[RMDB]
Structure probing data (2A3 and DMS) for a 177-nucleotide construct. It was measured as part of the RMDB library OK1LIB. For DMS, 1,462 sequencing reads were counted. Values cover nucleotides 27 to 126. 2A3 adducts were read by reverse transcription with SuperScript II with manganese. Conditions: 150 mM KOAc, 10 mM MgCl2 and 150 mM bicine (pH 8.5), 24 C.
RNA sequence: GGGAACGACUCGAGUAGAGUCGAAAAGACGCAGAGUUCGUCGUCGGCAAGGACGUAAACCCCGUCGAGUACUUUCUGGGUGCGGUUCUUGGCUGUCUGAACUCGACGGCGACGAUGGUCGCGCGCGCGGGGAUUUACUCUUCGGAGUAAAUCCCCGAAAAGAAACAACAACAACAAC
Reactivity to 2A3 in 0.01 (KOAc 150mM, MgCl2 10mM, bicine 150mM(pH8.5), 24C), signal-to-noise 2, nucleotides 027 to 126: g020a010c010g030c140a000g000a000g080u060u070c010g030u020c010g000u000c020g010g010c020a040a010g000g000a030c020g130u130a050a120a120c000c000c000c020g020u010c050g010a050g100u080a140c040u040u090u030c040u050g040g000g000u020g090c010g080g040u100u020c000u060u060g170g070c030u080g080u070c060u080g030a040a040c050u060c110g060a010c010g010g000c010g010a020c010g040a060u100g120g020u020c000g020c030g000c000g000c010g000
Reactivity to DMS in 0.01 (KOAc 150mM, MgCl2 10mM, bicine 150mM(pH8.5), 24C), signal-to-noise 2, nucleotides 027 to 126: g030a300c020g100c010a150g010a140g010u010u030c000g010u020c000g030u000c050g000g050c080a070a280g000g000a080c050g000u030a070a100a130c050c010c010c090g100u010c080g000a010g040u030a120c080u020u000u020c110u000g020g030g000u010g000c230g000g000u030u000c030u010u000g000g030c060u000g040u020c040u000g000a010a060c110u000c000g000a110c090g020g000c090g000a000c000g000a160u000g000g000u050c050g020c190g020c050g010c080g000